An RNA of 207 nucleotides, treated with 2A3 and DMS and read out base by base. For DMS the reverse transcriptase was MarathonRT. Source: RMDB library OK3TST, as collected in RNAgym.
RNA sequence: GGGAACGACUCGAGUAGAGUCGAAAAAGCGGGGGUGACCGCCCAGCACUUGCUGCGUGGGAGGUGAAUUCCGGACGGACGCGUAUGGUCAGGUGUAGCAAUAUUAGUUCUCUGAGUCGGUACAUCCCAGGGCGCACGUUCCAGAGGGUAGCAAGGGGUACAUAGUUUGUUUCGACAGAUUGUGUACAAAAGAAACAACAACAACAAC
Reactivity to 2A3 in 0.01 (KOAc 150mM, MgCl2 10mM, bicine 150mM(pH8.5), 24C), signal-to-noise 4, nucleotides 027 to 156: a000g060c070g000g000g000g000g010u020g020a010c000c010g000c010c010c000a010g020c010a010c040u100u290g050c060u010g010c060g160u080g010g030g000a020g020g000u040g040a040a070u100u010c010c000g000g030a010c030g010g020a030c030g010c010g020u070a060u120g030g030u080c090a070g030g000u030g040u060a030g070c030a030a030u070a100u230u100a070g060u110u020c060u000c030u070g040a040g050u040c020g010g010u000a010c000a040u020c000c000c000a000g030g040g000c020g000c000a030c010g020u090u000c000c000a010g010a010g020g010g000u040a020g050c030a030a040g030g010g020
Reactivity to DMS in 0.01 (KOAc 150mM, MgCl2 10mM, bicine 150mM(pH8.5), 24C), signal-to-noise 4, nucleotides 027 to 156: a090g010c080g000g000g020g030g020u010g020a070c030c020g010c010c000c010a090g020c020a070c040u010u010g020c090u000g020c030g010u010g020g010g020a050g010g050u010g020a090a190u000u010c040c020g000g010a080c050g030g010a060c060g020c050g020u000a080u000g030g010u000c050a070g030g010u000g020u000a070g010c040a050a100u000a120u000u000a100g010u000u000c090u000c030u010g010a100g020u010c030g000g010u020a050c030a070u000c000c010c030a110g020g010g020c050g010c040a050c040g020u000u000c030c030a090g020a120g010g010g020u000a090g020c050a060a060g000g000g000